[RMDB]
RNA sequence: GGGAACGACUCGAGUAGAGUCGAAAACUCUCAGCCCCUCCACCUUGGGGUGCCCUAUUCGAGGCACUGCAGUCUCGAUAGAAAGGCUAAGCACGUCGUAAUGACGUAAGGUGGGACUUUUCCUUCUGCUACAAAAUAUGUUCGCAUAUUUUGUAGCAAAAGAAACAACAACAACAAC
Reactivity to 2A3 in 0.01 (KOAc 150mM, MgCl2 10mM, bicine 150mM(pH8.5), 24C), signal-to-noise 3, nucleotides 027 to 126: c020u000c010u010c020a020g030c000c010c000c000u010c000c000a010c010c000u000u000g010g010g000g020u080g000c010c000c010u010a030u010u060c010g000a000g000g000c010a030c250u240g000c010a020g000u000c000u000c000g020a010u000a020g040a030a050a000g020g000c040u040a060a040g090c090a020c020g000u010c010g100u160a260a140u300g020a010c020g010u000a000a010g000g000u000g000g000g020a050c060u130u100u060u090c020c000u030u070c020u020
Reactivity to DMS in 0.01 (KOAc 150mM, MgCl2 10mM, bicine 150mM(pH8.5), 24C), signal-to-noise 2, nucleotides 027 to 126: c160u000c010u000c040a300g000c020c000c000c000u020c010c000a010c010c010u020u000g020g010g010g010u010g020c000c000c010u000a130u010u000c000g020a010g020g000c000a060c150u000g010c210a160g010u000c000u000c000g010a000u000a020g000a050a110a150g000g000c020u010a040a110g040c240a060c000g010u010c000g010u020a190a090u010g000a030c000g000u000a000a000g030g010u000g000g000g020a050c300u000u000u000u010c070c020u000u020c030u000
About this RNA:
This 177-nucleotide RNA was probed chemically with 2A3 and DMS. For 2A3, 5,464 sequencing reads were counted. The reactions ran in a buffer of 150 mM KOAc, 10 mM MgCl2 and 150 mM bicine (pH 8.5), at 24 C.